[RMDB]
Chemical mapping of a 177-nucleotide RNA with 2A3 and DMS. Reactivities are given for positions 27 through 126. High DMS reactivity at an A or C suggests that its Watson-Crick edge is free.

RNA sequence: GGGAACGACUCGAGUAGAGUCGAAAACCUCCAAACUUCGGUUUGGAGGAAAAGGAGCCAAAAUAAGAACGGAAAGGGAAGACGGAACCCAACUCUAUAAAAAAAGUACCAUGUUCGCAUGGUACAACUAAGAUAUACUGUUCGCAGUAUAUCUUAGAAAAGAAACAACAACAACAAC
Reactivity to 2A3 in 0.01 (KOAc 150mM, MgCl2 10mM, bicine 150mM(pH8.5), 24C), signal-to-noise 6, nucleotides 027 to 126: c000c010u000c000c000a000a000a010c010u040u080c200g070g010u010u000u010g000g000a030g000g010a020a010a000a020g030g010a020g050c010c020a020a060a020a100u230a080a040g070a090a030c050g020g050a090a050a040g050g010g010a030a020g060a030c040g030g030a030a050c010c010c000a030a070c030u050c050u090a110u300a130a130a020a020a010a000a020g000u010a000c000c000a000u010g030u020u070c210g000c110a000u000g000g000u000a000c000a000a000
Reactivity to DMS in 0.01 (KOAc 150mM, MgCl2 10mM, bicine 150mM(pH8.5), 24C), signal-to-noise 5, nucleotides 027 to 126: c000c000u010c000c000a000a000a010c000u000u010c230g030g020u000u000u000g000g010a000g010g000a000a020a070a090g010g010a080g010c040c040a050a050a070a090u010a090a090g010a090a100c130g000g000a040a060a100g000g010g000a070a060g000a070c090g000g000a090a100c020c030c020a030a120c110u010c070u010a070u030a010a000a070a070a060a120a100g010u000a000c000c000a010u000g000u000u020c180g030c000a010u000g000g000u000a000c000a030a080